Source: RMDB library TTRINS, as collected in RNAgym.
An RNA of 177 nucleotides, treated with DMS and read out base by base.
Conditions: 150 mM KOAc, 10 mM MgCl2 and 150 mM bicine (pH 8.5), 24 C.
RNA sequence: GGGAACGACUCGAGUAGAGUCGAAAAGAUAUGGAACGUGUAUAUGAUCAGGUCUCCGAUAAGCUGCUGUCGGAAACGACAGUCAGCUUUUGACGGAGCUACUGAUCAUAUACACGUUCCUAAGUCAGUAACGGUAAUUGUUCGCAAUUACCGUUACAAAAGAAACAACAACAACAAC
Reactivity to DMS in 0.01 (KOAc 150mM, MgCl2 10mM, bicine 150mM(pH8.5), 24C), signal-to-noise 3, nucleotides 027 to 126: g020a090u010a300u000g010g000a000a010c000g020u000g000u000a020u000a000u010g010a000u000c000a010g050g010u000c000u000c000c000g000a120u000a010a020g010c010u000g020c010u000g000u010c000g000g000a110a090a260c000g020a020c000a000g000u010c020a000g010c010u000u000u010u000g000a250c100g000g000a020g020c110u010a090c010u010g010a010u000c010a000u000a000u000a000c020a000c000g000u000u010c000c000u000a000a060g020u000c070a170